[RMDB]
RNA sequence: GGGAACGACUCGAGUAGAGUCGAAAAGAUAUGGACGAUGAAAUAGCAGAGCGAAUGUAUCGGAAACGAUACGAUCGCGACGAAGCUAUGGAGUCCUAAGUCAAACUGUGAACUUCGGUUCACAGAACUGCAUAGUCAACUUCGGUUGACUAUGCAGAAAAGAAACAACAACAACAAC
Reactivity to 2A3 in 0.01 (KOAc 150mM, MgCl2 10mM, bicine 150mM(pH8.5), 24C), signal-to-noise 1, nucleotides 027 to 126: g020a000u030a060u080g010g000a010c010g190a300u170g090a080a110a000u030a020g000c010a000g050a010g040c020g000a080a000u110g000u000a010u030c010g020g040a020a070a000c010g000a010u000a000c010g010a040u030c020g000c000g060a040c000g040a030a000g000c010u010a010u020g000g030a020g000u000c000c000u030a040a000g040u020c050a090a050a130c000u000g010u000g010a000a010c030u030u050c290g160g030u000u000c000a000c000a000g000a020a040
Reactivity to DMS in 0.01 (KOAc 150mM, MgCl2 10mM, bicine 150mM(pH8.5), 24C), signal-to-noise 2, nucleotides 027 to 126: g020a010u000a220u010g000g020a030c010g020a110u000g020a110a100a010u000a010g000c000a040g020a210g000c000g000a030a130u000g000u000a000u000c010g010g030a090a050a080c000g020a010u010a000c000g000a020u000c000g010c000g000a080c300g000a120a150g000c020u010a010u010g010g020a060g000u010c000c000u000a070a110g000u000c010a140a070a140c010u000g020u000g000a020a000c000u000u000c210g010g000u000u000c000a020c000a000g010a110a150
Chemical mapping of a 177-nucleotide RNA with 2A3 and DMS. Conditions: 150 mM KOAc, 10 mM MgCl2 and 150 mM bicine (pH 8.5), 24 C. The DMS profile rests on 1,464 reads.